This 177-nucleotide RNA was probed chemically with 2A3 and DMS.
RNA sequence: GGGAACGACUCGAGUAGAGUCGAAAAGUGAUUUUUCCAAACAUAUUCAUCUCCUCGUUAGUAUAUUUGCCUCGGUUCUAUUUCAAUGUGUCGCAUUGAAAUAGAAAUCCCCCGGCCGGGGGCCCCAGGAUCAUUACCUGUUCGCGGGUAGUGGUCCAAAAGAAACAACAACAACAAC
Reactivity to 2A3 in 0.01 (KOAc 150mM, MgCl2 10mM, bicine 150mM(pH8.5), 24C), signal-to-noise 5, nucleotides 027 to 126: g110u060g100a150u040u030u050u110u070c050c000a060a110a010c030a060u250a100u090u110c020a050u010c020u020c020c010u030c030g050u060u050a060g040u040a110u040a100u230u110u160g070c010c000u020c010g020g000u040u000c010u000a000u000u000u000c010a000a000u000g050u020g150u120c140g010c060a000u000u000g000a000a000a000u000a000g000a010a010a010u000c010c000c000c000c010g050g000c010c010g000g000g000g030g020c010c020c000c000a020
Reactivity to DMS in 0.01 (KOAc 150mM, MgCl2 10mM, bicine 150mM(pH8.5), 24C), signal-to-noise 2, nucleotides 027 to 126: g020u020g000a100u010u030u020u010u020c050c050a110a040a130c120a050u020a090u030u010c020a060u020c020u010c020c000u010c070g010u020u020a070g010u040a040u020a110u020u050u010g000c010c010u000c040g010g020u000u010c000u010a000u000u000u000c010a020a010u000g010u000g030u020c280g000c000a030u000u000g000a000a000a020u000a010g010a040a130a160u000c030c020c040c050c040g050g030c050c010g090g000g000g000g010c040c010c010c060a080
DMS (dimethyl sulfate) methylates the pairing face of unpaired adenines and cytosines. The reactions ran in a buffer of 150 mM KOAc, 10 mM MgCl2 and 150 mM bicine (pH 8.5), at 24 C.